Record summary
Conditions: 150 mM KOAc, 10 mM MgCl2 and 150 mM bicine (pH 8.5), 24 C. Structure probing data (2A3 and DMS) for a 177-nucleotide construct. The 2A3 profile rests on 6,415 reads. DMS (dimethyl sulfate) methylates the pairing face of unpaired adenines and cytosines. The data come from the RNA Mapping Database (RMDB), library OK2TST. The DMS profile rests on 5,110 reads.

[RMDB]
RNA sequence: GGGAACGACUCGAGUAGAGUCGAAAAUCCAGCAACAAAAGCUUGCUGACGAAAUAAAGCGAGUUCAUUAAGCUGCAUGAUCAUUAUCCUAUUGAGAUCUUCUGCAUUGAUAGUGGAGCGAUACAUAAGUAAUAUCGAGUUUCGACUCGAUAUUACUAAAAGAAACAACAACAACAAC
Reactivity to 2A3 in 0.01 (KOAc 150mM, MgCl2 10mM, bicine 150mM(pH8.5), 24C), signal-to-noise 6, nucleotides 027 to 126: u000c010c010a010g020c020a010a060c020a040a180a010a010g020c020u020u020g000c010u030g020a050c070g210a060a080a140u180a070a080a010g010c010g010a000g020u020u030c080a060u070u130a080a020g000c010u020g030c040a070u080g020a040u050c010a040u050u190a040u080c000c040u070a160u070u230g110a230g020a080u010c000u070u000c010u050g030c040a100u080u130g070a060u140a110g040u030g020g020a030g020c050g030a030u040a130c060a080u160a100
Reactivity to DMS in 0.01 (KOAc 150mM, MgCl2 10mM, bicine 150mM(pH8.5), 24C), signal-to-noise 6, nucleotides 027 to 126: u010c080c010a090g000c020a050a060c110a080a120a150a090g010c030u000u000g010c010u000g000a150c140g020a100a120a130u020a090a150a030g000c010g000a040g010u000u000c090a120u000u010a050a170g020c030u000g010c100a070u020g000a040u010c050a080u000u000a060u000c020c060u000a090u010u000g010a120g000a050u000c050u000u010c050u000g030c040a090u000u020g010a070u010a110g010u000g000g000a070g010c290g000a080u000a040c130a090u010a050